The record gives the reactivity of an RNA of 207 nucleotides to 2A3 and DMS. The data come from the RNA Mapping Database (RMDB), library RNAMAK. Conditions: 150 mM KOAc, 10 mM MgCl2 and 150 mM bicine (pH 8.5), 24 C.
[RMDB]
RNA sequence: GGGAACGACUCGAGUAGAGUCGAAAAUCAACAUUCGUGUUGAGGCUGCCGUAGGCUUAUACAUUGUCAGUAUCGCGAAACUGGCUUCGAAAGAGGCCAGGAGAUACUUGGAUUUAUGUUAUUAAGCCUAAACGGAAAUCAUGGGCUUCGGCCCAAAUAACGAUAUUGAGUUCGCUCAAUAUCGUUAAAAAGAAACAACAACAACAAC
Reactivity to 2A3 in 0.01 (KOAc 150mM, MgCl2 10mM, bicine 150mM(pH8.5), 24C), signal-to-noise 7, nucleotides 027 to 156: u010c010a010a020c010a040u110u170c220g100u080g000u050u020g020a040g070g020c100u130g030c010c000g010u010a010g000g010c000u010u000a020u000a040c000a010u000u020g020u020c000a000g000u010a000u010c010g020c090g180a080a080a120c010u000g010g000c010u000u010c020g080a120a070a030g000a010g010g000c010c000a000g000g010a040g000a000u000a000c010u040u150g120g000a040u160u300u110a020u050g040u080u060a090u100u120a030a010g000c000c000u010a050a030a000c010g000g060a050a040a050u240c140a140u100g010g010g000c010u050u050c230g120g000c010c000c000a020a000a000
Reactivity to DMS in 0.01 (KOAc 150mM, MgCl2 10mM, bicine 150mM(pH8.5), 24C), signal-to-noise 4, nucleotides 027 to 156: u000c010a020a010c000a100u000u000c240g050u010g040u000u010g000a040g010g020c060u000g010c010c050g020u000a040g010g010c010u000u000a050u000a050c010a020u000u000g010u000c000a030g010u000a010u000c020g010c110g020a150a100a300c010u000g000g010c010u000u000c010g010a160a140a300g010a040g010g010c000c000a010g000g010a080g000a020u000a010c010u000u000g030g010a050u000u000u000a010u030g010u000u010a090u010u000a020a020g010c000c000u000a030a070a170c020g010g000a050a060a080u000c100a160u000g010g010g030c020u000u010c160g050g000c000c000c000a010a010a140